[RMDB]
This 207-nucleotide RNA was probed chemically with 2A3.
RNA sequence: GGGAACGACUCGAGUAGAGUCGAAAACAUCCAAGUAGGCUACGCUUGCGUUCCCGUCUGAGAACGUAAGAAGAGAUGAACAGACUAGCUCUCGGAAGGCCCGCCCGCAGGCAAGAAGAUGAGUGAAACCAUAAAUAUGCAGGCUACGCUCGUAGACGUAAUUUGACGUGUUCGCACGUCAAAUUACAAAAGAAACAACAACAACAAC
Reactivity to 2A3 in 0.01 (KOAc 150mM, MgCl2 10mM, bicine 150mM(pH8.5), 24C), signal-to-noise 2, nucleotides 027 to 156: c040a080u060c020c010a070a020g110u060a060g130g050c080u130a010c040g000c000u000u010g000c000g000u010u010c020c030c000g000u000c000u000g010a020g000a030a010c000g000u050a030a030g010a010a030g040a010g030a130u220g080a110a050c020a000g010a000c010u010a000g030c000u000c010u000c040g000g020a000a000g010g010c010c010c050g000c000c000c010g000c020a020g000g000c010a000a000g010a030a000g000a010u070g000a010g000u030g000a050a030a000c030c010a120u110a290a040a000u020a010u020g030c000a000g020g020c040u080a040c060g040c050u110c090g130u120a040g010a160c080

Reactivities are given for positions 27 through 156. It was measured as part of the RMDB library RSTRND.